[RMDB]
RNA sequence: GGGAACGACUCGAGUAGAGUCGAAAAUGGUCUCGAACUCCUGGGCUUAAGUAAUCUACCUGCCUUGGCCUCCCAAAGUGUUGGGGUAACAGGCGUGAGUCACCACGCGUAGUCAGUGGAAACGCAGUGGAGUGGAGUGUUUCGACACUCCACUCCAAAAAGAAACAACAACAACAAC
Reactivity to DMS in 0.01 (KOAc 150mM, MgCl2 10mM, bicine 150mM(pH8.5), 24C), signal-to-noise 2, nucleotides 027 to 126: u040g000g000u000c000u020c050g000a030a130c120u000c050c000u000g020g000g000c020u000u000a040a020g000u000a100a040u020c080u000a200c040c020u030g000c080c020u000u000g000g000c020c010u000c010c020c000a040a090a130g040u000g040u020u010g010g030g000g060u040a140a130c060a070g000g030c010g000u020g000a050g020u000c110a080c040c020a050c020g040c030g030u000a000g040u040c080a090g020u010g000g000a070a120a040c050g030c050a100g000
Reactivity to 2A3 in 0.01 (KOAc 150mM, MgCl2 10mM, bicine 150mM(pH8.5), 24C), signal-to-noise 1, nucleotides 027 to 126: u100g000g000u010c000u000c020g040a080a020c020u000c020c080u070g020g020g000c020u080u100a020a020g060u040a130a040u020c000u030a060c000c000u000g050c000c000u010u090g000g000c000c000u070c000c000c000a010a010a010g300u290g020u050u060g010g000g020g000u020a060a000c010a030g000g050c000g080u130g060a000g050u120c060a070c090c000a020c050g000c020g010u090a160g170u190c000a000g020u020g080g000a160a050a000c050g010c000a000g020
Chemical mapping of a 177-nucleotide RNA with DMS and 2A3. The 2A3 profile rests on 538 reads. The RNA was probed in 150 mM KOAc, 10 mM MgCl2 and 150 mM bicine (pH 8.5) at 24 C. It was measured as part of the RMDB library OK1LIB. The DMS profile rests on 2,083 reads.